[RMDB]
Source: RMDB library M2PK50, as collected in RNAgym.
Structure probing data (2A3 and DMS) for a 177-nucleotide construct.
For DMS the reverse transcriptase was MarathonRT.
2A3 is a SHAPE reagent: it acylates the 2'-hydroxyl of flexible nucleotides of all four kinds.

RNA sequence: GGGAACGACUCGAGUAGAGUCGAAAAGGAACAUCCUUCGGGAUGUUCCAUAGGCGGCGCCUCUCGCUAAGCGGCGCGCUGAGGCGCGCAGCGCAGCUUGAAAGUAAGCCUAGUUCGCUAGGCUUAAAGGAUAUUACGUGUUCGCACGUAAUAUCCUAAAAGAAACAACAACAACAAC
Reactivity to 2A3 in 0.01 (KOAc 150mM, MgCl2 10mM, bicine 150mM(pH8.5), 24C), signal-to-noise 1, nucleotides 027 to 126: g020g010a000a010c040a010u000c000c030u060u070c200g050g010g000a000u000g000u010u040c000c000a000u020a020g050g000c060g050g080c040g010c010c020u010c010u000c030g000c030u030a070a040g090c050g110g030c050g000c010g030c060u010g010a030g140g020c020g020c040g000c000a040g030c030g010c010a020g000c000u020u120g050a100a080a040g080u070a040a000g000c000c000u000a000g010u030u040c140g040c130u000a010g010g000c000u000u000a050a030
Reactivity to DMS in 0.01 (KOAc 150mM, MgCl2 10mM, bicine 150mM(pH8.5), 24C), signal-to-noise 3, nucleotides 027 to 126: g010g000a020a000c000a010u000c000c000u000u000c190g020g000g020a000u000g000u000u000c000c000a030u010a020g000g010c010g010g000c040g000c050c000u000c050u010c040g000c040u000a080a170g000c110g010g050c120g030c060g010c070u000g010a070g030g000c010g000c010g020c000a020g010c000g030c150a040g010c040u000u010g010a090a100a110g000u000a020a010g000c000c000u000a010g000u000u020c180g020c000u000a000g000g000c000u010u000a000a050

For 2A3 the reverse transcriptase was SuperScript II with manganese. The reactions ran in a buffer of 150 mM KOAc, 10 mM MgCl2 and 150 mM bicine (pH 8.5), at 24 C.